[RMDB]
An RNA of 170 nucleotides, treated with 2A3 and DMS and read out base by base.
Source: RMDB library 15KLIB, as collected in RNAgym.
2A3 adducts were read by reverse transcription with SuperScript II with manganese.
DMS adducts were read by reverse transcription with MarathonRT.
RNA sequence: GGGAACGACUCGAGUAGAGUCGAAAAUACAGAUUAUAAUUACUAUUCUUAUAAUCUGCCUACUAUGUGUGACAUCAAACAAAUGUUGUUCUGCAUGGAAGUUGUAAACAAGUACUUCGAAAUCUAUACAGUAUUCCGUUCGCGGAAUACAAAAGAAACAACAACAACAAC
Reactivity to 2A3 in 0.01 (KOAc 150mM, MgCl2 10mM, bicine 150mM(pH8.5), 24C), signal-to-noise 4, nucleotides 027 to 129: u170a000c000a010g000a000u000u000a020u000a030a030u160u130a110c090u270a150u300u090c010u010u010a000u010a000a000u000c000u020g040c000c000u040a090c000u020a030u030g050u070g050u110g020a020c000a010u040c020a050a080a150c020a090a200a010u120g060u000u000g030u100u000c020u060g000c020a010u020g000g040a110a040g010u060u090g080u110a120a080a020c080a110a100g040u070a040c020u060u050c050g040a000a060a040u050c050u050a040u030a090c040a060
Reactivity to DMS in 0.01 (KOAc 150mM, MgCl2 10mM, bicine 150mM(pH8.5), 24C), signal-to-noise 3, nucleotides 027 to 129: u060a300c030a030g090a020u020u020a000u020a020a010u120u010a110c170u140a150u060u050c110u000u000a030u020a000a010u020c000u000g010c000c000u020a070c070u060a030u020g000u070g020u000g050a100c030a030u010c040a050a130a140c230a030a030a020u050g020u000u000g010u020u030c000u040g040c040a030u000g030g000a050a050g000u000u000g060u020a060a100a080c150a000a110g040u030a060c050u030u010c030g060a000a000a000u080c060u020a090u000a110c080a170